Structure probing data (DMS) for a 177-nucleotide construct. For DMS, 584 sequencing reads were counted. Conditions: 150 mM KOAc, 10 mM MgCl2 and 150 mM bicine (pH 8.5), 24 C. It was measured as part of the RMDB library TTRDEL. DMS adducts were read by reverse transcription with MarathonRT. Values cover nucleotides 27 to 126.
RNA sequence: GGGAACGACUCGAGUAGAGUCGAAAAGAUAUGGACUACUACCCACCGCUGUAUGCUCGUUGAAAUCGGAAACGAUGGAGAGCGAAGGCGAGGUAGUCCUAAGUCAAAAGGCGUCUUCGGACGCCAAGUUGCUUUGCUACUUCGGUAGCAAAGCAACAAAAGAAACAACAACAACAAC
Reactivity to DMS in 0.01 (KOAc 150mM, MgCl2 10mM, bicine 150mM(pH8.5), 24C), signal-to-noise 1, nucleotides 027 to 126: g030a130u010a160u010g020g010a010c010u000a000c000u000a110c000c000c040a300c050c000g000c010u020g010u000a070u000g010c000u000c000g000u000u000g000a100a100a010u000c000g000g000a120a020a200c000g030a000u100g000g020a030g000a000g000c000g000a130a300g000g010c050g000a000g040g050u000a000g000u000c000c000u000a010a020g000u000c230a040a050a170a070g020g010c000g000u000c020u000u000c230g020g010a010c010g070c000c000a000a020